RNA sequence: GGGAACGACUCGAGUAGAGUCGAAAAUCGUGUGGAGUAUACAACAGAUGAUAACCUUCCAUCAAUAUCAGCACUUCCUCAAUUUAGAUGCCCGCUCAUCUCAGGACUGCGUAUAUUCCAAAUGGCCCCUUAUGACCAAAUUCGUUUGGUCAUAAGGAAAAGAAACAACAACAACAAC
Reactivity to DMS in 0.01 (KOAc 150mM, MgCl2 10mM, bicine 150mM(pH8.5), 24C), signal-to-noise 7, nucleotides 027 to 126: u040c030g020u000g020u000g000g010a040g020u000a020u010a020c050a080a160c110a060g020a080u030g000a090u010a120a100c100c050u000u010c050c040a040u020c060a110a080u030a070u020c060a060g000c080a050c050u000u010c020c000u000c090a070a060u020u020u020a090g000a080u000g000c020c000c010g000c050u000c050a040u010c040u020c070a060g000g000a110c100u010g010c260g000u010a020u000a040u010u000c010c010a020a050a050u020g000g010c050c040
Reactivity to 2A3 in 0.01 (KOAc 150mM, MgCl2 10mM, bicine 150mM(pH8.5), 24C), signal-to-noise 9, nucleotides 027 to 126: u120c030g010u050g030u040g060g020a020g030u030a020u020a060c070a170a010c030a090g050a060u060g020a030u110a100a080c010c010u090u050c050c010a050u070c040a070a100u070a060u200c040a010g040c020a020c030u060u040c010c010u060c040a080a120u060u130u170a110g020a080u080g030c010c030c010g030c040u030c020a090u010c030u020c030a030g020g060a080c020u020g000c020g010u010a010u000a010u060u000c000c000a010a040a070u060g060g020c000c010